Background:
This 207-nucleotide RNA was probed chemically with 2A3.
[RMDB]
RNA sequence: GGGAACGACUCGAGUAGAGUCGAAAAGGUCUCACUCUAAGUGGGCUACACUGGCUAAUCUCCGUCUGAGGUUAGUUGGAAGAGCUUAAUCAGACUAGCUGAAUGGAAGCCUGUUACCGGGCCGAUGUUUAUGCGAAAUGCUAAUACGGUGACUACGGCAUUGCGAGAAGUUCGCUUCUCGCAAUGCAAAAGAAACAACAACAACAAC
Reactivity to 2A3 in 0.01 (KOAc 150mM, MgCl2 10mM, bicine 150mM(pH8.5), 24C), signal-to-noise 1, nucleotides 027 to 156: g070g070u200c060u090c090a000c000u090c060u090a200a090g000u050g000g000g000c000u050a020c010a010c120u020g000g000c010u000a000a000u060c030u030c070c060g060u030c020u010g030a040g000g000u050u020a020g020u010u000g040g020a130a080g020a010g110c080u090u220a030a040u090c000a000g000a000c000u000a010g000c010u000g000a000a000u030g070g020a010a110g030c000c000u000g020u010u020a020c020c000g000g000g010c000c060g000a000u050g000u000u040u040a170u300g020c000g030a000a020a040u180g080c140u270a020a000u010a000c000g000g000u000g000a010c010u010a030c070g010

The reactions ran in a buffer of 150 mM KOAc, 10 mM MgCl2 and 150 mM bicine (pH 8.5), at 24 C.
Reactivities are given for positions 27 through 156.